[RMDB]
RNA sequence: GGGAACGACUCGAGUAGAGUCGAAAACUCUGAGUCUUCGGACUCAGAGAAACGCUUUCGACUCUGAUACCAACAAUCGCGAGUUUGUUGGUAUAAUCGCAAAAAGGUGGGAGUUCGCUCCCACCAACGAUGAGUAGUUGUUCGCAACUACUCAUCGAAAAGAAACAACAACAACAAC
Reactivity to DMS in 0.01 (KOAc 150mM, MgCl2 10mM, bicine 150mM(pH8.5), 24C), signal-to-noise 4, nucleotides 027 to 126: c010u000c000u000g010a010g000u000c000u000u000c240g000g010a000c010u010c000a020g010a010g010a020a080a050c300g010c210u000u000u000c000g010a010c000u000c000u000g000a030u000a010c000c000a010a010c000a020a000u000c020g020c300g000a190g020u000u000u000g000u000u010g000g000u000a010u000a030a050u000c020g020c300a050a070a060a090a060g010g040u000g010g010g010a030g010u000u010c250g010c000u000c000c000c000a000c000c000a000a020
Reactivity to 2A3 in 0.01 (KOAc 150mM, MgCl2 10mM, bicine 150mM(pH8.5), 24C), signal-to-noise 3, nucleotides 027 to 126: c000u000c010u000g000a010g000u000c000u030u150c260g120g000a010c000u000c000a000g000a000g010a010a020a010c110g030c090u010u020u000c000g000a000c000u020c010u040g020a010u000a010c000c000a000a000c000a000a010u030c020g020c060g140a100g120u010u010u020g000u010u010g010g020u000a000u020a010a050u030c050g010c110a050a050a040a050a060g000g020u000g000g010g010a010g000u070u070c170g040c040u000c000c000c000a000c000c000a000a000